About this RNA:
Chemical mapping of a 177-nucleotide RNA with 2A3 and DMS. High DMS reactivity at an A or C suggests that its Watson-Crick edge is free. For DMS the reverse transcriptase was MarathonRT. Values cover nucleotides 27 to 126. Source: RMDB library OK2TRN, as collected in RNAgym. The reactions ran in a buffer of 150 mM KOAc, 10 mM MgCl2 and 150 mM bicine (pH 8.5), at 24 C.

[RMDB]
RNA sequence: GGGAACGACUCGAGUAGAGUCGAAAAGCGUCAAGAACAAGAAGAUGAGCAAAGUGGAGACUCUGCGUUCGGCAGUGGACUACAUAAAAAGACUCCAAGAGCUGCUAGAUGAGCAGAACCCUGGUGGAAUGGGUACAUUAUUCGUAAUGUACCCAUUAAAAGAAACAACAACAACAAC
Reactivity to 2A3 in 0.01 (KOAc 150mM, MgCl2 10mM, bicine 150mM(pH8.5), 24C), signal-to-noise 5, nucleotides 027 to 126: g030c020g040u040c050a030a080g050a120a080c040a070a030g050a060a010g030a120u090g040a020g050c050a040a110a060g050u050g040g040a060g010a040c010u000c020u040g030c020g080u160u180c060g100g000c010a010g010u060g050g030a040c020u070a020c070a050u270a070a130a020a020a020g060a070c030u010c010c010a030a020g030a010g070c000u010g000c000u050a070g020a300u190g110a030g000c010a010g010a020a020c010c000c010u020g000g050u040g030g040
Reactivity to DMS in 0.01 (KOAc 150mM, MgCl2 10mM, bicine 150mM(pH8.5), 24C), signal-to-noise 9, nucleotides 027 to 126: g000c060g010u010c040a070a070g010a080a070c090a060a070g000a090a080g010a070u000g000a090g020c060a050a080a110g010u000g010g010a090g010a120c040u000c010u000g000c030g010u010u010c160g030g010c020a030g010u000g000g010a110c050u000a050c080a050u010a030a060a090a100a090g000a100c060u000c010c020a070a080g000a100g010c020u000g010c030u000a130g010a110u000g000a080g010c040a030g010a050a090c030c020c000u000g000g010u000g000g010